[RMDB]
This 177-nucleotide RNA was probed chemically with DMS and 2A3. 2A3 adducts were read by reverse transcription with SuperScript II with manganese. The DMS profile rests on 2,309 reads. The RNA was probed in 150 mM KOAc, 10 mM MgCl2 and 150 mM bicine (pH 8.5) at 24 C.
RNA sequence: GGGAACGACUCGAGUAGAGUCGAAAAUUUAGCUCCGUAAGCGCCUUGAUGAGCUCGCGAUGGUCCGCGGCGUUCAUCACCACGGGCCACUCGGAGUACACCAUAGACUCUGAAGCUCCGUAGGCCGUGUGAUGGAGGAUUUCGAUCCUCCAUCACAAAAAGAAACAACAACAACAAC
Reactivity to DMS in 0.01 (KOAc 150mM, MgCl2 10mM, bicine 150mM(pH8.5), 24C), signal-to-noise 2, nucleotides 027 to 126: u050u030u050a070g040c110u010c000c020g030u020a100a200g010c130g000c000c000u020u040g000a100u000g000a020g000c000u000c100g030c090g000a160u030g010g030u000c030c030g000c000g000g120c080g000u020u020c080a160u000c010a070c100c000a090c000g000g000g020c010c010a010c070u020c000g010g000a030g040u000a120c070a110c130c220a070u000a100g000a040c020u000c000u060g010a060a120g000c000u030c000c000g010u000a050g000g020c050c060g050
Reactivity to 2A3 in 0.01 (KOAc 150mM, MgCl2 10mM, bicine 150mM(pH8.5), 24C), signal-to-noise 3, nucleotides 027 to 126: u140u110u090a060g000c040u020c020c040g080u090a140a020g040c070g050c080c000u100u090g060a140u070g000a080g010c020u020c010g040c060g070a110u100g060g030u030c040c000g000c000g000g000c020g000u090u090c040a100u140c020a030c040c020a040c020g000g000g000c000c000a020c030u000c000g000g000a020g000u050a040c040a030c050c150a100u110a100g080a040c000u020c030u090g020a070a020g000c000u000c030c000g030u060a010g030g000c010c000g040